[RMDB]
RNA sequence: GGGAACGACUCGAGUAGAGUCGAAAAGCGUGGGAAGCGAUAGUGCUGCACAAGCCGCUCUUGGCAUCCAGGACGCGCACCAUGGAGGACUUGUUGGGGGCUGACUACCCAGGGUUGUUUAACCCCCCCACAUGGUGCUAUUCGUAGCACCAUGUGGAAAAGAAACAACAACAACAAC
Reactivity to DMS in 0.01 (KOAc 150mM, MgCl2 10mM, bicine 150mM(pH8.5), 24C), signal-to-noise 1, nucleotides 027 to 126: g050c080g000u010g020g010g030a130a090g020c030g030a090u000a140g030u010g010c010u000g030c080a130c140a040a050g000c040c060g020c070u000c040u000u000g000g030c080a070u010c040c040a070g000g000a100c090g020c070g000c080a090c060c020a060u010g020g010a090g000g020a080c090u000u010g010u010u000g030g050g010g000g030c030u000g000a140c070u000a060c010c010c050a240g020g000g000u000u000g000u000u000u000a070a120c030c010c000c020c020